[RMDB]
RNA sequence: GGGAACGACUCGAGUAGAGUCGAAAAUGAAAAAGGCUAUGUCGACUUCGAAGUCAGCAUUCUAGGCCAUGGUGGUCAUUCCUCUGUCCCACCUGAUCAUACCACGAUCGGUAUCGCUUCAGAACUGGUGUUCUCCUUUUUUCGAAAAGGAGAACACAAAAGAAACAACAACAACAAC
Reactivity to 2A3 in 0.01 (KOAc 150mM, MgCl2 10mM, bicine 150mM(pH8.5), 24C), signal-to-noise 2, nucleotides 027 to 126: u150g080a070a020a010a000a000g090g000c050u080a020u110g050u050c000g020a030c010u130u060c140g040a070a020g000u000c020a000g020c000a030u100u090c040u130a030g070g000c000c000a030u060g030g010u070g000g040u030c010a100u080u030c020c000u020c040u040g030u000c000c000c000a010c000c020u000g010a060u060c020a030u020a050c000c000a080c130g230a150u150c080g000g000u040a040u080c100g000c070u070u030c010a030g000a170a050c060u150g080
Reactivity to DMS in 0.01 (KOAc 150mM, MgCl2 10mM, bicine 150mM(pH8.5), 24C), signal-to-noise 3, nucleotides 027 to 126: u020g000a040a050a100a070a180g000g000c060u020a060u010g010u000c030g010a040c030u000u010c280g020a130a120g020u000c050a030g000c040a030u000u000c150u010a070g000g010c030c020a080u010g000g010u000g000g010u000c060a100u000u010c050c010u000c070u000g010u000c040c010c000a090c100c020u030g000a010u000c060a140u000a050c060c080a100c210g000a050u010c090g060g010u010a020u000c180g020c070u000u000c070a040g010a090a110c210u010g000